[RMDB]
RNA sequence: GGGAACGACUCGAGUAGAGUCGAAAAGAUAUGGACUAUAAAUCGAGGAUUGACUAUGUUCAUUUUAAGUCGGAAACGACUUAAAAUGAACACGAAUCAAUCUACCCACCGAUGUAGUCCUAAGUCACAUAAUAAAUGCCUUCGGGCAUUUAUUAUGAAAAGAAACAACAACAACAAC
Reactivity to 2A3 in 0.01 (KOAc 150mM, MgCl2 10mM, bicine 150mM(pH8.5), 24C), signal-to-noise 1, nucleotides 027 to 126: g020a010u110a110u250g000g010a010c000u010a010u100a250a300a200u090c020g000a050g070g000a010u020u000g000a000c020u050a020u140g060u000u000c000a050u000u000u000u000a000a000g000u000c010g000g020a140a140a000c010g000a000c000u000u000a020a000a000a000u010g000a000a000c000a000c000g000a010a220u010c000a010a010u040c000u070a100c120c060c000a040c010c060g000a010u050g010u000a010g000u020c020c000u000a260a030g020u010c000a010
Reactivity to DMS in 0.01 (KOAc 150mM, MgCl2 10mM, bicine 150mM(pH8.5), 24C), signal-to-noise 3, nucleotides 027 to 126: g000a080u010a300u010g000g000a030c010u000a010u010a100a080a130u000c000g020a120g010g000a020u000u000g010a010c070u000a220u000g010u000u000c000a000u000u000u000u000a020a000g010u000c000g000g020a110a120a180c010g010a010c000u000u000a000a000a010a000u010g000a010a000c000a000c110g020a070a120u000c000a000a000u000c000u000a080c080c080c090a300c190c000g000a020u000g020u000a010g010u000c000c010u010a050a090g010u000c030a250
Overview: An RNA of 177 nucleotides, treated with 2A3 and DMS and read out base by base. The RNA was probed in 150 mM KOAc, 10 mM MgCl2 and 150 mM bicine (pH 8.5) at 24 C. For DMS the reverse transcriptase was MarathonRT. The 2A3 profile rests on 2,325 reads. 2A3 adducts were read by reverse transcription with SuperScript II with manganese. Values cover nucleotides 27 to 126.